The record gives the reactivity of an RNA of 177 nucleotides to 2A3 and DMS. Source: RMDB library OK1LIB, as collected in RNAgym. DMS adducts were read by reverse transcription with MarathonRT. Values cover nucleotides 27 to 126.
RNA sequence: GGGAACGACUCGAGUAGAGUCGAAAACAUGUCUGCCCGAAAACGGUCCGGGCGGCACAGCCAGCGAUACUGACGAACGAAAUCCCGGGAGACCCCAUGAUCGAAAGCGGUAAAGUGCAGACGAUAGCUAACAUUAGACUUUCGAGUCUAAUGUUAGAAAAGAAACAACAACAACAAC
Reactivity to 2A3 in 0.01 (KOAc 150mM, MgCl2 10mM, bicine 150mM(pH8.5), 24C), signal-to-noise 9, nucleotides 027 to 126: c050a040u090g010u000c040u120g010c000c000c010g030a090a090a030a050c090g050g030u050c050c010g020g000g000c000g000g000c030a030c010a030g050c020c000a020g030c030g060a040u060a140c030u080g060a040c030g040a130a020c020g030a060a030a080u040c010c010c000g010g020g000a070g060a050c010c000c000c030a070u130g020a010u030c020g030a060a050a020g020c020g030g000u120a110a090a040g090u100g040c010a010g020a040c020g030a040u060a070g040
Reactivity to DMS in 0.01 (KOAc 150mM, MgCl2 10mM, bicine 150mM(pH8.5), 24C), signal-to-noise 8, nucleotides 027 to 126: c130a120u020g010u010c030u020g010c010c000c010g010a060a080a100a110c170g010g000u020c060c040g010g010g020c050g010g020c070a050c140a090g020c020c020a060g000c050g010a050u020a080c050u020g000a080c040g000a070a080c070g010a060a090a080u010c010c010c010g000g000g000a090g000a120c040c000c020c030a090u040g000a040u010c020g010a030a130a130g000c020g000g000u010a070a070a110g000u020g020c020a010g010a270c030g000a070u020a090g020